[RMDB]
RNA sequence: GGGAACGACUCGAGUAGAGUCGAAAACGCCGAUUCGUCGGCGACGGAGGGGUCUUCCACGAGUGCGCAGAUAUAUGAACUACGUCUGAAGCCUCCACGGACGCAUAUGUAGCACGAGUGGAAGACGGAGGCACCCAGGCUAUAGCUUCGGCUAUAAAACAGAGACCUAAUUCGUUAGGUCUCUGUUAAAAGAAACAACAACAACAAC
Reactivity to DMS in 0.01 (KOAc 150mM, MgCl2 10mM, bicine 150mM(pH8.5), 24C), signal-to-noise 3, nucleotides 027 to 156: c000g030c000c020g010a080u020u010c240g040u000c010g050g010c000g040a010c090g000g010a160g010g000g050g010u000c000u000u000c000c010a040c040g010a300g060u000g000c000g080c140a120g010a170u010a100u000a060u000g010a170a250c050u000a270c000g000u010c000u000g020a050a110g000c010c000u000c000c000a300c010g020g020a060c010g000c000a000u000a110u000g020u000a100g020c000a010c000g000a300g030u000g000g010a030a020g010a020c010g020g010a030g070g000c020a140c030c000c030a300g020g030c100u000a030u000a050g010c010u000u010c270g060g030c030u000a040u000a050a140
Reactivity to 2A3 in 0.01 (KOAc 150mM, MgCl2 10mM, bicine 150mM(pH8.5), 24C), signal-to-noise 3, nucleotides 027 to 156: c020g000c010c000g010a040u080u060c240g060u010c010g160g040c020g010a050c090g130g110a150g020g010g000g000u000c000u000u000c000c000a000c020g010a010g010u020g020c010g020c300a020g060a030u010a010u000a010u040g060a160a100c110u160a060c290g000u000c000u000g010a030a010g010c000c000u000c000c000a010c000g000g000a000c000g000c000a000u010a000u000g020u000a000g000c000a000c000g010a020g000u000g000g000a000a000g000a000c010g000g010a000g000g000c010a040c010c010c010a030g110g090c040u070a040u020a040g010c010u060u040c230g050g000c030u020a030u090a060a140